[RMDB]
RNA sequence: GGGAACGACUCGAGUAGAGUCGAAAAGAUAUGGAUGGGUGACCUCAACAGCUUACUGGAUCGGAAACGAUCUUAAGACAUGAGGCCACCCAUCCUAAGUCAAAACGUAACGGUUCGCCGUUACGAACCAGUACAUUUAGUUCGCUAAAUGUACUGGAAAAGAAACAACAACAACAAC
Reactivity to DMS in 0.01 (KOAc 150mM, MgCl2 10mM, bicine 150mM(pH8.5), 24C), signal-to-noise 9, nucleotides 027 to 126: g010a040u000a280u000g000g000a010u000g000g010g030u000g000a020c000c000u000c000a070a100c300a240g000c000u000u000a020c300u010g000g010a010u000c000g000g000a080a080a170c010g000a010u000c000u000u000a010a020g010a040c060a300u010g010a010g000g010c010c000a010c000c000c000a000u000c000c000u000a000a050g000u000c020a090a060a120a200c020g010u000a000a000c000g010g000u000u010c260g030c000c000g010u000u000a000c000g010a070a110
Reactivity to 2A3 in 0.01 (KOAc 150mM, MgCl2 10mM, bicine 150mM(pH8.5), 24C), signal-to-noise 9, nucleotides 027 to 126: g010a010u040a020u080g010g000a000u010g010g000g010u010g010a040c000c010u020c050a170a130c070a170g030c000u020u040a070c120u230g080g020a010u010c000g020g000a030a020a020c010g000a000u020c010u010u030a010a000g000a010c090a300u300g000a000g000g000c000c000a000c000c000c000a010u010c000c000u000a000a000g000u000c000a010a010a070a120c020g000u000a000a000c000g000g120u050u090c300g030c130c010g000u010u000a000c000g000a010a060

The record gives the reactivity of an RNA of 177 nucleotides to DMS and 2A3. 2A3 adducts were read by reverse transcription with SuperScript II with manganese. Reactivities are given for positions 27 through 126. For 2A3, 65,079 sequencing reads were counted. The reactions ran in a buffer of 150 mM KOAc, 10 mM MgCl2 and 150 mM bicine (pH 8.5), at 24 C.